[RMDB]
RNA sequence: GGGAACGACUCGAGUAGAGUCGAAAAGCACCCUGGGACCCAGUAAUGCCCGGGGGGAGGCGGGGUAAACCCAUACCAUGGGAACUGCUGGGUCCCUCGGAUGUCGAUCCCCUCUCCCGUUCGGGAAAAAGGUUCUAGUUCGCUAGAACCAAAAGAAACAACAACAACAAC
Reactivity to DMS in 0.01 (KOAc 150mM, MgCl2 10mM, bicine 150mM(pH8.5), 24C), signal-to-noise 6, nucleotides 027 to 129: g000c040a070c010c020c000u020g020g010g030a040c000c000c000a050g050u020a070a120u110g000c000c020c020g020g020g000g010g010g030a060g060g070c120g000g000g000g000u020a090a070a120c050c020c020a040u080a100c050c010a060u070g000g000g000a030a040c070u030g010c000u030g000g000g000u010c000c000c000u020c080g050g020a090u000g040u000c010g000a100u010c030c020c020c140u020c000u020c000c010c010g050u080u060c100g030g030g220a010a040a020a040a020
Reactivity to 2A3 in 0.01 (KOAc 150mM, MgCl2 10mM, bicine 150mM(pH8.5), 24C), signal-to-noise 9, nucleotides 027 to 129: g010c000a020c010c000c000u010g000g000g000a000c000c000c000a000g000u030a060a090u210g030c000c000c000g020g000g010g020g010g050a080g060g120c160g010g020g010g010u120a100a140a140c010c000c010a030u130a090c020c030a060u120g000g000g000a030a030c030u030g010c000u000g000g000g000u000c000c000c000u000c000g000g010a140u030g050u090c020g020a080u040c010c000c000c010u030c000u010c000c010c010g100u220u210c120g010g000g000a050a010a000a010a020

Conditions: 150 mM KOAc, 10 mM MgCl2 and 150 mM bicine (pH 8.5), 24 C.
Chemical mapping of a 170-nucleotide RNA with DMS and 2A3.
DMS adducts were read by reverse transcription with MarathonRT.
The DMS profile rests on 38,059 reads.